RNA sequence: GGGAACGACUCGAGUAGAGUCGAAAAUAAAACCACGCUUUGAAGGAUCUGCCAAGCUCACUUUUAAUCAUGAGAAAGAAAUUACCCACAUGGAGACAGCAGAAAAUGAGAAAGGAGAGAUCGUGCUAGUAUGGUUAGGUUUCGACCUAACCAUACUAAAAGAAACAACAACAACAAC
Reactivity to 2A3 in 0.01 (KOAc 150mM, MgCl2 10mM, bicine 150mM(pH8.5), 24C), signal-to-noise 5, nucleotides 027 to 126: u070a010a030a000a010c010c000a030c020g070c040u060u030u080g070a080a050g030g020a030u030c000u050g030c000c030a070a010g020c010u000c030a110c050u040u080u070u200a100a110u130c050a040u100g070a040g090a070a110a000g080a010a100a000u100u060a080c010c010c030a050c000a030u040g000g000a020g010a030c010a020g010c010a010g090a040a070a010a010u090g030a020g040a050a050a000g090g000a020g010a030g010a050u080c040g000u060g020c030u010
Reactivity to DMS in 0.01 (KOAc 150mM, MgCl2 10mM, bicine 150mM(pH8.5), 24C), signal-to-noise 4, nucleotides 027 to 126: u050a050a090a100a090c020c010a110c170g020c050u020u010u020g070a150a120g010g000a150u010c030u010g010c030c020a110a150g000c020u010c020a090c020u000u000u020u030a060a150u020c070a040u000g010a110g010a050a080a120g010a050a050a140u010u040a110c040c040c030a130c170a040u020g000g000a040g000a040c070a040g040c130a060g010a020a040a040a090u000g010a040g000a030a040a060g040g020a100g000a010g010a060u000c060g000u000g000c120u000
Chemical mapping of a 177-nucleotide RNA with 2A3 and DMS. It was measured as part of the RMDB libraries RFM100 and RFMREP. For 2A3 the reverse transcriptase was SuperScript II with manganese. Conditions: 150 mM KOAc, 10 mM MgCl2 and 150 mM bicine (pH 8.5), 24 C. Reactivities are rounded to 0.1 and cut off at 0 and 3. Values cover nucleotides 27 to 126.